[RMDB]
RNA sequence: GGGAACGACUCGAGUAGAGUCGAAAAGAAAAGUAGAGGUUUUGUAUCUCUACGAAUGCGUUUUGCGACAGAAGUUGCUGAAGCUUUCGGCCUCUGACACUUAUCAAUCGCGAUUGCGCAGACAAAAGGGUAUUCUAUUCUUCGGAAUAGAAUACCCAAAAGAAACAACAACAACAAC
Reactivity to DMS in 0.01 (KOAc 150mM, MgCl2 10mM, bicine 150mM(pH8.5), 24C), signal-to-noise 2, nucleotides 027 to 126: g020a070a020a090a170g030u000a000g000a000g000g000u000u030u020u080g020u000a040u000c020u000c000u000a020c000g000a080a040u000g000c000g010u000u000u000u000g010c000g010a020c120a150g010a030a040g020u000u030g000c030u000g000a010a060g000c000u000u020u040c190g000g040c020c010u000c000u000g010a080c080a020c030u010u000a070u020c110a110a300u000c000g000c010g000a000u030u010g020c000g000c010a000g010a110c190a020a100a170a050
Reactivity to 2A3 in 0.01 (KOAc 150mM, MgCl2 10mM, bicine 150mM(pH8.5), 24C), signal-to-noise 5, nucleotides 027 to 126: g050a000a040a010a010g020u030a000g000a010g080g060u060u090u240u300g220u160a040u010c010u000c000u000a000c010g000a010a010u040g010c000g000u000u010u040u070g010c010g000a020c020a050g130a050a020g080u300u220g030c000u020g000a040a060g010c000u080u170u190c110g040g000c010c020u000c020u020g090a060c010a010c110u090u160a120u240c110a140a080u010c010g000c010g060a040u010u120g010c000g000c000a020g030a070c160a010a090a000a050